RNA sequence: GGGAACGACUCGAGUAGAGUCGAAAAAGUGUCCGUCGGCGUAGCCGACAACAUGCCCAGGUAGCCCAGACCUUCAAGGCUACGGUGCGUUGCGACGCACGGUCUGAUUCUUCACAACGACGUUCACAAGAUCGGAUCACUUUCGAGUGAUCCGAAAGUCCUUUCAUCGAUUCGUCGAUGAAAGGACAAAAGAAACAACAACAACAAC
Reactivity to 2A3 in 0.01 (KOAc 150mM, MgCl2 10mM, bicine 150mM(pH8.5), 24C), signal-to-noise 1, nucleotides 027 to 156: a000g010u010g000u010c150c060g000u000c050g000g080c240g190u230a130g000c000c000g060a000c010a000a030c040a010u080g030c080c000c000a050g020g000u000a000g010c000c100c160a000g000a030c000c000u030u000c000a000a000g000g030c000u010a000c000g010g000u000g010c010g010u030u110g100c150g130a010c000g000c000a000c000g030g000u000c000u000g050a020u060u160c080u140u090c110a030c000a280a120c150g210a000c070g140u110u150c020a000c010a220a120g070a240u030c000g010g030a000u000c000a000c000u110u080u140c170g120a030g000u000g000a000u000c010c000g000a000a010a000